[RMDB]
RNA sequence: GGGAACGACUCGAGUAGAGUCGAAAAAAAAGAAGGGUCAGAGGCAAACUUGUAGCUCCUUUGACAGCUGAGUCUGGAACAGACUGUUAAAUGUUACCUAUUGCCAUCAUUUAACUUGAGGUUUACCUCGACCCGAAAUAUUCGUAUUUCGGGUCGAAAAAGAAACAACAACAACAAC
Reactivity to DMS in 0.01 (KOAc 150mM, MgCl2 10mM, bicine 150mM(pH8.5), 24C), signal-to-noise 1, nucleotides 027 to 126: a100a000a090a200g020a240a060g010g010g040u000c060a080g010a040g010g010c250a070a060a070c080u000u010g020u000a060g000c060u000c080c090u020u000u020g000a040c080a060g020c030u000g020a060g000u010c020u010g000g020a070a080c080a040g000a080c020u010g000u010u000a000a040a000u000g020u010u000a100c090c200u000a090u000u010g000c060c020a050u010c050a030u000u000u010a000a020c050u010u020g000a040g010g020u000u000u010a070c090c040